[RMDB]
RNA sequence: GGGAACGACUCGAGUAGAGUCGAAAACAUCAAUCGUCAUUGUCUUCACCAUUCAAUAAGUCGACGAUUUCACUUUUAACCAUUGAACUAGACGCUUUUUUUGUAAUGAUUCGCAUAGUUCUAAUAAUUCUUGUUUUGUCAGCUUAUCUAAAGGUAAGAGUCCAAAAUGAUUCGUCAUUUUGGACUCAAAAGAAACAACAACAACAAC
Reactivity to 2A3 in 0.01 (KOAc 150mM, MgCl2 10mM, bicine 150mM(pH8.5), 24C), signal-to-noise 2, nucleotides 027 to 156: c070a050u130c040a080a040u000c020g050u100c040a140u060u190g070u060c050u200u220c130a200c130c030a190u100u160c090a140a090u200a240a050g050u060c030g020a000c010g040a000u050u060u080c070a070c040u010u140u090u180a060a060c060c020a050u030u120g010a020a010c010u020a010g090a190c040g070c070u100u070u060u020u040u090u070g060u130a130a090u180g040a040u160u020c040g040c040a030u000a020g050u030u020c000u000a060a070u100a120a050u220u020c020u080u100g080u020u070u010u010g040u080c020a070g000c040u030u100a110u160c070u130a130a080a110g050g010u100a120a050
The record gives the reactivity of an RNA of 207 nucleotides to 2A3.
The RNA was probed in 150 mM KOAc, 10 mM MgCl2 and 150 mM bicine (pH 8.5) at 24 C.
Values cover nucleotides 27 to 156.